This 207-nucleotide RNA was probed chemically with 2A3 and DMS. The 2A3 profile rests on 5,420 reads. The RNA was probed in 150 mM KOAc, 10 mM MgCl2 and 150 mM bicine (pH 8.5) at 24 C.
[RMDB]
RNA sequence: GGGAACGACUCGAGUAGAGUCGAAAAAGUAAGUGGCGUUGAUACUUGAGUCCUGCGCAACGGAGAUUUGCGAACCCCGUCAGGUCCGGAAGGAAGCAGCGGUAAGCAAACACCUCCGUGUGCCGCAGGGGUGCUUGAGUGGAGCUAACUGCUUGCGCAUGUUCUAUGUCUUCGGACAUAGAACAUGAAAAGAAACAACAACAACAAC
Reactivity to 2A3 in 0.01 (KOAc 150mM, MgCl2 10mM, bicine 150mM(pH8.5), 24C), signal-to-noise 4, nucleotides 027 to 156: a000g000u010a010a000g000u000g010g010c020g190u300u000g010a010u010a010c000u000u000g000a000g090u300c010c000u000g010c000g000c000a010a000c000g010g000a000g020a060u000u000u000g010c010g010a050a040c030c000c030c030g010u050c000a020g000g030u000c000c010g080g150a130a120g030g000a020a000g000c000a010g000c000g010g000u040a060a020g000c000a000a000a000c060a120c030c000u030c010c000g010u040g050u030g010c050c030g000c000a010g000g000g010g010u220g020c000u000u000g000a000g000u000g000g000a000g000c000u000a010a000c000u000g000c010u000u030g000c060g000
Reactivity to DMS in 0.01 (KOAc 150mM, MgCl2 10mM, bicine 150mM(pH8.5), 24C), signal-to-noise 2, nucleotides 027 to 156: a050g000u000a000a070g000u010g020g000c030g030u000u000g000a190u000a030c040u010u010g010a030g020u000c020c000u010g020c010g060c030a090a030c010g040g020a020g010a230u010u010u000g030c000g000a140a250c080c090c010c030g000u000c060a300g040g000u000c020c010g040g050a240a160g000g000a060a090g010c050a220g000c020g030g030u010a080a300g000c000a000a020a020c050a050c090c000u050c000c020g040u000g000u000g030c120c050g010c020a070g020g000g000g020u010g000c000u000u020g000a080g000u000g000g010a120g010c030u000a040a040c030u000g000c010u000u010g020c130g050